[RMDB]
RNA sequence: GGGAACGACUCGAGUAGAGUCGAAAACAUUUUCAACUUAGCUUUUGGCUUCAUUUACUGAUAAUAAACAGUGUUGCAUACAACACAUGUUCCACAAAACACUCAGUCACACACAUACAGAUGCCAAUAAUUUUUUCCAGUAUGUCAGGCAUAUUAAUCCAUUUUAGUCAUUCGUGACUAAAAUGGAAAAAGAAACAACAACAACAAC
Reactivity to DMS in 0.01 (KOAc 150mM, MgCl2 10mM, bicine 150mM(pH8.5), 24C), signal-to-noise 2, nucleotides 027 to 156: c060a180u000u000u020u010c060a050a110c090u000u000a150g020c020u010u020u010u010g030g030c010u000u000c070a120u000u010u010a180c060u000g030a120u000a080a090u000a070a040a030c030a110g000u010g030u000u000g000c090a170u000a090c040a030a060c030a010c030a030u000g010u000u000c050c050a120c070a030a120a090a080c110a070c100u000c030a040g040u000c020a060c040a080c060a070c020a080u000a050c000a070g000a080u000g010c000c020a060a040u000a050a010u010u000u010u000u010u000c020c010a100g000u010a050u000g030u000c050a060g010g020c020a050u010a070u000u010a030a250
Reactivity to 2A3 in 0.01 (KOAc 150mM, MgCl2 10mM, bicine 150mM(pH8.5), 24C), signal-to-noise 5, nucleotides 027 to 156: c010a010u080u100u140u140c070a070a060c050u070u120a030g040c030u100u030u060u090g040g000c020u070u070c060a130u080u090u150a060c020u030g040a030u040a190a020u060a050a120a010c020a020g000u010g020u020u030g020c070a080u110a290c020a040a000c010a000c010a070u020g010u000u040c070c030a100c050a060a100a040a010c060a040c040u030c010a010g010u070c010a030c000a010c000a010c010a120u080a100c030a060g030a040u060g010c010c020a040a050u130a090a070u070u050u050u030u090u050c030c000a020g040u060a030u060g060u050c030a030g050g000c030a010u040a070u140u210a060a050